[RMDB]
RNA sequence: GGGAACGACUCGAGUAGAGUCGAAAAAGGCGAUCGUACUGCACCAUGUGAUCGCUAGCUAGGUACCUACACGAUCACCAUGCGCAGAGUGAUCUCUAGCAUGUCAGGUACCUAGCGCGAGUCAUGGGUCUAAAAGAAGGUUCGCCUUCUUUUAGACAAAAGAAACAACAACAACAAC
Reactivity to DMS in 0.01 (KOAc 150mM, MgCl2 10mM, bicine 150mM(pH8.5), 24C), signal-to-noise 9, nucleotides 027 to 126: a080g010g010c010g010a020u000c020g020u000a110c120u000g010c110a230c020c030a100u000g010u000g000a030u000c000g020c020u000a040g020c010u000a010g000g010u000a010c010c000u000a090c140a110c160g000a050u000c060a070c130c030a060u000g010c080g010c190a070g000a070g010u010g010a100u010c010u000c080u010a120g010c120a060u000g000u000c180a010g000g000u000a000c000c000u000a000g010c010g000c070g000a050g010u000c010a050u010g000g010
Reactivity to 2A3 in 0.01 (KOAc 150mM, MgCl2 10mM, bicine 150mM(pH8.5), 24C), signal-to-noise 9, nucleotides 027 to 126: a000g090g000c020g020a050u040c050g070u130a080c080u120g060c050a040c040c010a030u030g040u050g090a110u010c000g000c010u010a020g000c000u000a000g000g000u000a000c000c000u020a030c100a020c110g080a070u070c020a010c060c010a050u160g050c110g020c150a020g100a040g060u100g150a170u040c010u000c010u030a060g040c040a050u060g050u070c070a000g000g000u000a000c000c000u000a000g000c000g000c010g010a010g050u030c010a030u050g130g000